[RMDB]
RNA sequence: GGGAACGACUCGAGUAGAGUCGAAAACCUAUCGUGAGGUAAAUCUGAAGGAAGUCGGCGGCAAACCUUUGAGUUCUGAGGAACACGAAGUCACAUGAGGCUUAAUUUACUGGGUAAGCUAGCCUAAGUGUCAGGGAAAGUUCGCUUUCCCUGACACAAAAGAAACAACAACAACAAC
Reactivity to 2A3 in 0.01 (KOAc 150mM, MgCl2 10mM, bicine 150mM(pH8.5), 24C), signal-to-noise 1, nucleotides 027 to 126: c070c010u030a050u060c040g010u020g010a020g030g000u050a100a200a090u020c000u000g080a010a000g040g000a040a020g090u040c000g040g000c000g000g030c000a030a020a030c000c000u020u030u050g090a060g000u000u120c020u030g090a130g060g030a000a000c000a000c110g050a020a000g000u000c010a050c010a090u140g070a010g030g000c000u000u030a010a010u060u010u000a100c000u070g000g030g050u040a040a060g020c100u100a050g000c020c000u000a070a000
Reactivity to DMS in 0.01 (KOAc 150mM, MgCl2 10mM, bicine 150mM(pH8.5), 24C), signal-to-noise 1, nucleotides 027 to 126: c000c010u050a050u000c040g050u010g000a060g000g000u030a080a000a090u000c000u000g000a160a000g000g000a000a160g000u000c040g000g060c000g000g080c020a050a110a050c190c040u000u010u000g020a060g010u000u020c010u060g000a300g030g010a050a050c130a120c190g000a000a080g000u000c100a120c150a030u030g000a140g000g000c000u000u000a010a040u000u080u000a030c010u060g110g000g010u000a080a140g000c060u050a070g030c000c000u000a000a290